[RMDB]
RNA sequence: GGGAACGACUCGAGUAGAGUCGAAAACGACAUGGCUUCGGCCAUGUCGAAAGGACGAGUGUGACCGAAACGGAGGUAGGUCCAACUACCUUCUCACUCAAAAAAUCCGUUUGUUCGCAAACGGAAAGAAUGUCCUAAUCUUCGGAUUAGGACAUUCAAAAGAAACAACAACAACAAC
Reactivity to DMS in 0.01 (KOAc 150mM, MgCl2 10mM, bicine 150mM(pH8.5), 24C), signal-to-noise 3, nucleotides 027 to 126: c010g010a030c000a000u000g010g020c000u000u020c230g020g000c000c000a010u000g010u000c000g010a020a050a080g010g010a150c080g020a000g000u000g000u000g020a180c040c030g010a030a100a090c200g000g000a010g000g020u000a010g010g000u010c250c230a080a290c010u000a000c000c000u000u000c010u010c010a010c020u030c020a000a000a080a090a060a090u000c000c010g000u000u000u000g030u020u000c220g030c000a010a000a000c000g000g000a020a020a100
Reactivity to 2A3 in 0.01 (KOAc 150mM, MgCl2 10mM, bicine 150mM(pH8.5), 24C), signal-to-noise 2, nucleotides 027 to 126: c010g000a000c000a000u010g000g010c000u080u040c190g080g000c000c000a000u010g000u010c000g000a020a000a000g050g020a020c090g020a010g010u040g000u070g130a090c030c080g040a140a120a000c150g000g020a010g000g000u020a000g030g030u080c120c020a060a100c000u010a010c000c000u010u000c010u020c010a000c000u000c000a020a010a030a020a050a070u020c000c000g000u010u000u000g060u030u040c260g010c130a020a000a000c000g020g000a000a000a000

The record gives the reactivity of an RNA of 177 nucleotides to DMS and 2A3.
DMS adducts were read by reverse transcription with MarathonRT.
Reactivities are given for positions 27 through 126.